[RMDB]
RNA sequence: GGGAACGACUCGAGUAGAGUCGAAAAUCUAUCACCAGCCCAUGUUUACGACACGAAUGGGCUGUUGCAAAUUACCUAUAGCUCUUGCAACAUCGUGUCGAAACGUUCCCAAGCUAUACGCCACAAACAGGAGUUUACAGUUCGCUGUAAACUCCUGAAAAGAAACAACAACAACAAC
Reactivity to DMS in 0.01 (KOAc 150mM, MgCl2 10mM, bicine 150mM(pH8.5), 24C), signal-to-noise 2, nucleotides 027 to 126: u000c030u000a110u000c080a020c090c040a080g000c010c000c030a150u000g000u000u000u010a170c010g020a010c020a010c010g000a070a050u000g020g010g040c160u000g000u000u000g040c020a000a020a100u010u010a090c050c050u020a130u000a030g040c060u010c110u000u010g020c050a030a030c050a090u000c050g010u000g010u000c020g020a050a020a130c050g000u000u010c010c000c010a110a140g000c040u010a030u000a080c120g010c020c070a050c140a080a090a130
Reactivity to 2A3 in 0.01 (KOAc 150mM, MgCl2 10mM, bicine 150mM(pH8.5), 24C), signal-to-noise 1, nucleotides 027 to 126: u020c000u060a160u070c020a000c090c020a010g000c020c000c000a030u120g090u070u080u060a070c040g000a000c000a030c010g030a070a090u080g000g000g000c030u010g000u000u000g000c000a000a010a090u180u090a050c020c010u080a060u090a110g040c050u050c000u050u060g000c020a010a030c010a080u020c020g000u000g020u020c010g010a100a070a000c020g010u030u000c000c000c000a020a000g000c000u070a080u060a280c090g020c030c020a040c030a060a110a050